Annotation
Structure probing data (2A3 and DMS) for a 207-nucleotide construct. It was measured as part of the RMDB library M2RFPK. The reactions ran in a buffer of 150 mM KOAc, 10 mM MgCl2 and 150 mM bicine (pH 8.5), at 24 C. 2A3 is a SHAPE reagent: it acylates the 2'-hydroxyl of flexible nucleotides of all four kinds. For 2A3 the reverse transcriptase was SuperScript II with manganese. The DMS profile rests on 2,095 reads.
RNA sequence: GGGAACGACUCGAGUAGAGUCGAAAACGGAAGCAUUAAAACCAUUCGAGCUAGUCAAUGCGUGGCGUGUCUCUCCGCAGCGUGUUGGCGAAUGUAAACAGUGACUAAGCAUGUAGUACCGAGGAUGAUAAGAGCAAUUCGUUCGCGAAUUGCUCAAGUAAAUGGGGCAGUUCGCUGCCCCAUUUACAAAAGAAACAACAACAACAAC
Reactivity to 2A3 in 0.01 (KOAc 150mM, MgCl2 10mM, bicine 150mM(pH8.5), 24C), signal-to-noise 3, nucleotides 027 to 156: c070g060g020a070a000g020c030a010u060u110a050a020a040a110c050c010a000u030u070c080g030a050g030c060u130a040g020u000c000a010a020u020g020c000g010u040g040g030c040g010u130g060u030c040u030c020u010c150c000g030c010a000g000c000g000u000g000u020u010g010g000c000g010a020a010u060g030u080a020a060a070c040a080g040u020g080a020c030u040a080a010g060c030a010u060g020u120a070g030u030a080c020c040g010a010g060g010a030u120g030a020u150a130a140g010a000g000c000a000a000u010u000c010g020u040u070c190g000c010g040a000a000u000u000g010c000u010c000a010a020
Reactivity to DMS in 0.01 (KOAc 150mM, MgCl2 10mM, bicine 150mM(pH8.5), 24C), signal-to-noise 1, nucleotides 027 to 156: c080g020g010a130a170g050c040a130u000u000a060a030a120a070c050c030a230u000u010c030g000a200g020c050u000a160g010u000c010a030a000u000g000c040g010u000g000g030c040g000u020g010u010c110u010c040u000c190c020g040c000a030g000c030g080u000g030u010u020g040g060c060g010a060a030u050g000u010a090a060a060c050a130g000u000g000a090c080u010a120a150g060c070a060u010g020u010a070g000u000a050c020c000g010a090g010g000a100u000g020a120u010a050a220g020a020g020c000a020a020u020u000c010g020u000u000c290g100c080g040a010a030u000u020g000c000u000c020a000a080